Conditions: 150 mM KOAc, 10 mM MgCl2 and 150 mM bicine (pH 8.5), 24 C. The record gives the reactivity of an RNA of 207 nucleotides to 2A3. The 2A3 profile rests on 799 reads.
RNA sequence: GGGAACGACUCGAGUAGAGUCGAAAAGGAGUCAGGGCACACAGAUGUGUCAGAUGAGGCUUUGCUUGCAAGGAGCUCACCACUUGGGUGGUGGAGAAGGCCCAGAAGGCACUACUACAGUGCUCCCAAAUCAGGAAAAGAUUGCUAAAUGCCCGUAGACUAAAAUCGGAUUCGUCCGAUUUUAGUCAAAAGAAACAACAACAACAAC
Reactivity to 2A3 in 0.01 (KOAc 150mM, MgCl2 10mM, bicine 150mM(pH8.5), 24C), signal-to-noise 2, nucleotides 027 to 156: g070g010a040g010u070c050a070g000g000g000c010a010c010a010c000a050g030a110u040g000u030g020u000c000a030g030a150u060g030a150g030g000c000u040u030u050g000c020u030u020g060c120a120a030g170g010a030g080c030u020c020a000c000c000a060c050u130u120g300g040g000u030g000g040u020g040g000a160g020a030a030g000g040c000c000c000a010g000a040a030g000g000c000a010c000u050a010c000u020a050c140a000g020u000g010c020u050c040c000c000a050a130a070u200c100a080g060g000a000a050a030a050g040a000u040u040g030c040u010a160a060a160u090g020c020c030c010g030u090a030